This 177-nucleotide RNA was probed chemically with DMS and 2A3.
The data come from the RNA Mapping Database (RMDB), library OK1LIB.
The RNA was probed in 150 mM KOAc, 10 mM MgCl2 and 150 mM bicine (pH 8.5) at 24 C.
RNA sequence: GGGAACGACUCGAGUAGAGUCGAAAAAGCGCGGCCGCGGAGGCGUUGACCGGGCUGGGCGAUAAGUUCGGCGAGUCGAUCGUCAACGCCAACACCGUUCUGGAUGACCUCAAUUCGCGGAUGCCGCGGUGGUACCGAUGUUCGCAUCGGUACCACCAAAAGAAACAACAACAACAAC
Reactivity to DMS in 0.01 (KOAc 150mM, MgCl2 10mM, bicine 150mM(pH8.5), 24C), signal-to-noise 2, nucleotides 027 to 126: a070g030c080g000c000g000g000c050c040g020c000g020g040a160g060g000c010g120u000u000g000a000c060c030g020g000g020c060u000g030g000g000c000g000a070u020a060a160g030u050u020c020g030g000c000g010a080g000u080c120g030a140u030c160g000u020c000a010a000c000g020c000c000a180a090c100a160c080c050g000u030u000c040u050g030g000a110u000g000a180c090c070u010c170a090a210u020u010c000g020c060g060g000a130u070g000c000c000g000c000
Reactivity to 2A3 in 0.01 (KOAc 150mM, MgCl2 10mM, bicine 150mM(pH8.5), 24C), signal-to-noise 3, nucleotides 027 to 126: a000g050c040g010c020g010g000c020c020g000c000g010g040a020g000g000c000g010u010u010g010a050c040c030g070g040g000c010u030g000g000g000c000g010a110u070a260a050g090u050u030c000g020g040c030g040a080g100u140c020g080a090u090c050g040u000c000a000a020c010g000c000c000a060a010c040a030c020c030g080u160u060c100u140g050g070a110u070g060a120c070c000u140c040a040a130u080u040c040g010c010g130g040a210u160g040c000c000g010c010
For DMS the reverse transcriptase was MarathonRT. 2A3 adducts were read by reverse transcription with SuperScript II with manganese.